[RMDB]
RNA sequence: GGGAACGACUCGAGUAGAGUCGAAAAGAUAUGGACACGAACUACUUCAGCCCACUACCCACCUCGGAAACGAGAGGUGGGUGAGAAGCGUGUCCUAAGUCAAAAGCCUGUUCUUCGGAACAGGCAAUCUAUGUUGUUGGUUCGCCAACAACAUAGAAAAAGAAACAACAACAACAAC
Reactivity to 2A3 in 0.01 (KOAc 150mM, MgCl2 10mM, bicine 150mM(pH8.5), 24C), signal-to-noise 3, nucleotides 027 to 126: g050a010u130a040u210g010g000a010c000a000c020g050a110a050c070u220a030c020u300u050c000a040g040c000c040c000a010c020u150a150c080c060c070a140c110c010u000c000g030g030a130a110a070c050g040a030g010a080g070g000u010g000g000g000u020g000a160g000a000a000g000c010g000u010g000u000c010c000u020a060a020g080u050c050a080a080a110a120g010c010c000u000g010u010u010c010u030u060c300g070g000a010a000c010a000g000g010c010a010a000
Reactivity to DMS in 0.01 (KOAc 150mM, MgCl2 10mM, bicine 150mM(pH8.5), 24C), signal-to-noise 5, nucleotides 027 to 126: g020a050u010a260u010g000g010a020c010a020c000g000a070a040c050u020a300c010u010u000c010a300g000c010c000c010a060c060u000a080c090c030c060a300c140c000u000c010g000g000a070a060a120c090g010a030g020a060g000g020u000g010g010g000u000g000a060g000a020a020g000c010g010u000g000u000c000c010u020a030a060g010u000c090a050a090a140a150g010c000c000u000g010u000u000c000u000u010c160g020g000a000a010c000a020g010g010c010a000a010